[RMDB]
Background: This 177-nucleotide RNA was probed chemically with 2A3 and DMS. Values cover nucleotides 27 to 126. For 2A3, 6,827 sequencing reads were counted. Source: RMDB library TTRDEL, as collected in RNAgym. For DMS the reverse transcriptase was MarathonRT.
RNA sequence: GGGAACGACUCGAGUAGAGUCGAAAAGAUAUGGAGUCGGUAACCUUUUGACGGCACUCGGAAACGAGUGGCCGAUAAGGUUACGACUCCUAAGUCAAAUCAUGCGUUUGUUCGCAAACGCAUGAAACAGAUUGAGUGAGUUCGCUCACUCAAUCUGAAAAGAAACAACAACAACAAC
Reactivity to 2A3 in 0.01 (KOAc 150mM, MgCl2 10mM, bicine 150mM(pH8.5), 24C), signal-to-noise 3, nucleotides 027 to 126: g020a000u040a030u140g000g010a000g000u040c170g070g200u150a010a010c000c000u030u080u090u150g270a110c000g000g000c010a000c000u020c000g030g000a040a040a030c010g000a000g000u010g070g060c000c000g000a010u020a050a050g000g000u000u010a010c000g000a000c010u000c000c000u000a020a000g010u010c030a010a050a200u030c010a000u000g010c000g010u000u000u000g070u060u070c280g020c210a000a020a000c010g000c000a010u000g010a000a010a010
Reactivity to DMS in 0.01 (KOAc 150mM, MgCl2 10mM, bicine 150mM(pH8.5), 24C), signal-to-noise 3, nucleotides 027 to 126: g000a040u000a300u000g010g000a040g020u000c000g010g010u010a000a000c000c000u000u000u010u000g000a260c120g010g010c000a030c000u000c000g010g000a100a080a180c010g020a020g000u010g010g000c010c000g000a100u000a000a010g000g010u000u010a020c010g010a010c010u000c000c000u000a000a050g000u000c010a070a090a230u000c000a000u030g020c000g010u000u000u000g000u000u000c180g030c010a000a000a000c000g000c000a000u000g000a000a060a150